Source: RMDB library OK3TST, as collected in RNAgym. The record gives the reactivity of an RNA of 207 nucleotides to 2A3 and DMS. For DMS the reverse transcriptase was MarathonRT. Values cover nucleotides 27 to 156. The reactions ran in a buffer of 150 mM KOAc, 10 mM MgCl2 and 150 mM bicine (pH 8.5), at 24 C.

RNA sequence: GGGAACGACUCGAGUAGAGUCGAAAAUGCUACACCGACUACACGUAAUUACCGGUGUAGCUACGGUAGUUACGACAACUGAUCCGAGAGGAUCUACAUUAAGGCGAAGGUGAAAUAUAGGUUAAUAGGCACCUGAAGCCGAGCCUAUUAACCAACAACCAGUAUGGAUAUUCGUAUCCAUACUGGUAAAAGAAACAACAACAACAAC
Reactivity to 2A3 in 0.01 (KOAc 150mM, MgCl2 10mM, bicine 150mM(pH8.5), 24C), signal-to-noise 8, nucleotides 027 to 156: u100g000c010u010a010c010a010c010c010g070a040c050u190a050c160a040c100g160u140a080a120u150u080a080c050c010g010g000u020g010u020a000g000c000u000a010c020g000g020u020a020g020u050u070a030c060g040a030c110a110a040c120u060g000a000u000c000c000g030a030g000a030g090g000a000u000c000u020a030c020a070u100u110a070a030g060g010c050g040a040a010g020g010u070g060a020a080a010u230a040u130a130g000g000u000u000a000a000u000a000g000g000c010a020c050c050u060g060a040a000g020c030c020g000a000g000c000c000u000a000u000u010a000a000c010c000a010a020c020a000
Reactivity to DMS in 0.01 (KOAc 150mM, MgCl2 10mM, bicine 150mM(pH8.5), 24C), signal-to-noise 3, nucleotides 027 to 156: u010g010c000u000a070c030a140c010c020g020a160c050u030a070c080a130c090g010u000a090a130u000u020a060c060c030g000g000u010g020u000a120g030c030u000a010c020g030g010u000a030g020u000u000a060c070g000a130c060a070a150c060u000g000a020u000c000c020g010a300g000a300g030g010a020u000c000u000a010c120a170u000u000a080a060g030g010c070g000a120a100g010g030u000g020a050a080a090u010a160u000a150g040g010u000u000a030a030u000a010g000g000c000a070c140c040u000g020a110a210g000c110c000g030a060g010c010c010u000a000u000u000a000a030c010c000a050a070c090a130

For 2A3, 9,527 sequencing reads were counted.